[RMDB]
RNA sequence: GGGAACGACUCGAGUAGAGUCGAAAACGGAGAACCUUUGUGUCAUAACGCAACAGCACCGGUUGCUUGACACGAGGUUACGAUGUAGUACUGCUGCUAGGCUCCGCAGUGCCGAGAAGCUUCGGUGAGACCACUACAUAUUCGUAUGUAGUGGUCUAAAAGAAACAACAACAACAAC
Reactivity to DMS in 0.01 (KOAc 150mM, MgCl2 10mM, bicine 150mM(pH8.5), 24C), signal-to-noise 8, nucleotides 027 to 126: c020g000g000a300g000a020a010c010c000u000u020u040g030u000g000u000c000a040u020a080a120c240g000c010a010a010c010a110g000c090a060c110c090g010g000u000u000g010c000u000u010g000a000c000a000c000g000a000g000g010u000u000a040c030g010a250u060g010u000a060g000u010a060c070u010g000c010u010g010c050u010a070g010g010c030u010c030c080g010c040a050g000u010g010c000c030g000a060g010a100a110g000c080u010u000c010g000g000u010g000
Reactivity to 2A3 in 0.01 (KOAc 150mM, MgCl2 10mM, bicine 150mM(pH8.5), 24C), signal-to-noise 2, nucleotides 027 to 126: c010g010g000a070g020a020a010c000c000u020u030u300g020u000g000u000c010a020u040a160a050c110g000c000a000a000c000a020g110c030a040c040c030g040g000u000u000g000c000u000u050g000a000c000a000c000g000a000g000g000u000u020a040c000g010a010u060g030u020a020g020u010a020c010u020g020c000u010g010c000u030a050g040g000c010u000c010c010g010c000a010g000u000g030c000c010g020a020g010a080a030g030c050u050u010c010g000g000u020g020